[RMDB]
RNA sequence: GGGAACGACUCGAGUAGAGUCGAAAAACCAUUUGAAUAGGUGCUGCUCAGCCCUUUUGAGUCUGUCAUCGGAAAGACCAUGGCUUUCUCGCUUUUCAUCUUUUUGGAUGGCUGCUUGUCGCAAUAUGUCUUAUUUUAGAUUCGUCUAAAAUAAGACAAAAGAAACAACAACAACAAC
Reactivity to DMS in 0.01 (KOAc 150mM, MgCl2 10mM, bicine 150mM(pH8.5), 24C), signal-to-noise 6, nucleotides 027 to 126: a110c010c010a150u010u020u010g010a090a090u000a060g000g020u030g000c040u000g010c110u020c140a090g000c050c020c040u000u000u000u000g000a060g010u020c070u000g010u000c030a040u010c040g000g000a050a040a030g020a070c090c150a080u010g000g010c020u000u010u010c130u020c150g010c050u000u010u010u020c150a090u000c020u010u000u000u010u000g010g020a020u000g000g020c020u000g010c050u000u000g010u000c110g010c090a060a090u000a070u010
Reactivity to 2A3 in 0.01 (KOAc 150mM, MgCl2 10mM, bicine 150mM(pH8.5), 24C), signal-to-noise 9, nucleotides 027 to 126: a000c030c010a070u140u090u140g170a130a070u100a110g050g020u090g040c020u010g030c020u050c140a040g010c000c010c000u040u070u040u100g020a010g020u020c060u050g030u020c010a020u030c050g010g040a110a050a010g050a040c030c030a060u060g010g000c000u040u100u070c090u060c050g020c040u090u090u100u110c040a040u020c030u020u130u060u090u120g220g010a030u030g020g010c010u020g010c010u060u070g050u070c070g000c090a040a100u090a120u250